[RMDB]
RNA sequence: GGGAACGACUCGAGUAGAGUCGAAAACCCGAUUUCGAAUAGGUAAAUCCCUACUUUCCAUGACAUAAAUAAAGGACAAAACGCCGAGCCAUCAGUAUGACGGCACAGCGUUUUGUGUUACUGCCUAAAUAUGCUCAUUCUUCGGAAUGAGCAUAUUAAAAGAAACAACAACAACAAC
Reactivity to 2A3 in 0.01 (KOAc 150mM, MgCl2 10mM, bicine 150mM(pH8.5), 24C), signal-to-noise 6, nucleotides 027 to 126: c020c000c000g050a060u080u110u170c110g040a090a080u050a070g010g020u090a030a030a200u090c030c010c000u050a090c060u070u060u010c080c040a060u100g110a130c040a060u220a070a120a020u200a100a120a030g070g000a020c000a000a000a000a000c000g000c000c010g010a010g000c000c000a010u010c010a030g300u170a280u300g040a010c040g000g000c010a000c020a050g000c000g000u000u000u000u010g000u000g000u010u060a050c030u050g030c000c000u010a040
Reactivity to DMS in 0.01 (KOAc 150mM, MgCl2 10mM, bicine 150mM(pH8.5), 24C), signal-to-noise 4, nucleotides 027 to 126: c000c010c000g010a110u010u020u020c070g010a090a090u010a050g010g020u000a060a110a090u010c030c010c010u010a100c110u000u000u010c000c060a080u010g010a060c140a080u010a070a060a080u030a030a110a090g000g000a040c000a000a010a010a010c000g010c000c020g000a050g000c000c000a040u010c000a190g040u020a070u020g010a010c070g010g010c000a070c010a050g000c010g020u000u000u010u000g000u000g010u000u010a080c120u010g010c030c020u010a050